[RMDB]
RNA sequence: GGGAACGACUCGAGUAGAGUCGAAAACUAUAUCCAAGAGAUGGUGUCUGCAGGAGCGGAGUUGCCUUCUGAUAGAUACAACUUACUAGAUGGUUCUUUUGAUGAGACAGCUUCGGCAAAACAUGUGACCAUACCUAAAAUUCGUUUUAGGUAUGGUAAAAGAAACAACAACAACAAC
Reactivity to 2A3 in 0.01 (KOAc 150mM, MgCl2 10mM, bicine 150mM(pH8.5), 24C), signal-to-noise 9, nucleotides 027 to 126: c010u030a020u030a040u300c030c010a070a030g050a000g010a100u100g080g030u010g010u000c010u020g010c010a010g020g030a010g020c030g050g130a200g110u180u120g050c020c000u040u000c010u020g050a130u030a080g010a000u030a040c020a030a040c030u060u140a050c040u040a040g070a160u070g080g010u050u030c010u040u110u060u090g080a110u040g010a010g020a040c010a020g000c000u040u040c080g050g000c010a010a040a050a030c040a040u130g080u080g170
Reactivity to DMS in 0.01 (KOAc 150mM, MgCl2 10mM, bicine 150mM(pH8.5), 24C), signal-to-noise 9, nucleotides 027 to 126: c050u000a100u010a060u000c030c040a090a090g000a080g010a070u010g010g010u000g010u000c020u000g010c020a040g000g010a040g010c050g010g010a110g010u010u010g010c100c010u000u000c020u000g000a100u010a020g010a040u000a050c080a070a080c050u000u000a090c110u000a100g010a070u000g010g000u000u000c030u000u000u000u000g010a100u000g000a080g000a070c130a100g010c030u000u000c070g010g010c050a050a050a090a080c120a050u000g010u000g010
The record gives the reactivity of an RNA of 177 nucleotides to 2A3 and DMS. For DMS the reverse transcriptase was MarathonRT.